[RMDB]
RNA sequence: GGGAACGACUCGAGUAGAGUCGAAAAAAAGGCCCUAAGGUCAGAACCUGGCUGUUUGAGAAUGGCGAGGAGCGUCUCAGUCGCAUGGCCGUCAGCGGUGAUGACUGCGUGGUGAAACCUUUGGACGGACUCACUUCUAGUUCGCUAGAAGUGAGUCAAAAGAAACAACAACAACAAC
Reactivity to 2A3 in 0.01 (KOAc 150mM, MgCl2 10mM, bicine 150mM(pH8.5), 24C), signal-to-noise 2, nucleotides 027 to 126: a000a050a030g060g000c010c000c010u020a090a010g000g000u000c030a020g020a120a030c020c010u030g160g020c020u000g110u020u090u200g090a120g050a130a140u170g110g000c030g030a060g090g100a080g120c050g040u000c000u000c020a050g070u040c030g010c070a050u150g070g000c030c030g050u100c040a000g080c030g070g090u060g010a090u060g010a010c000u030g000c080g050u050g010g020u050g050a090a090a090c000c000u000u010u050g060g030a040c080g040
Reactivity to DMS in 0.01 (KOAc 150mM, MgCl2 10mM, bicine 150mM(pH8.5), 24C), signal-to-noise 2, nucleotides 027 to 126: a030a080a060g020g040c020c010c040u030a050a130g020g000u000c050a070g010a300a080c030c010u010g010g010c000u000g010u000u000u010g000a100g040a060a010u010g000g040c010g020a130g000g010a190g030c070g010u000c050u000c040a040g040u000c120g010c120a090u000g000g000c020c030g000u000c110a100g000c070g000g010u000g000a130u000g000a040c010u000g000c170g010u000g000g010u000g010a100a070a140c040c000u000u010u000g010g010a130c140g000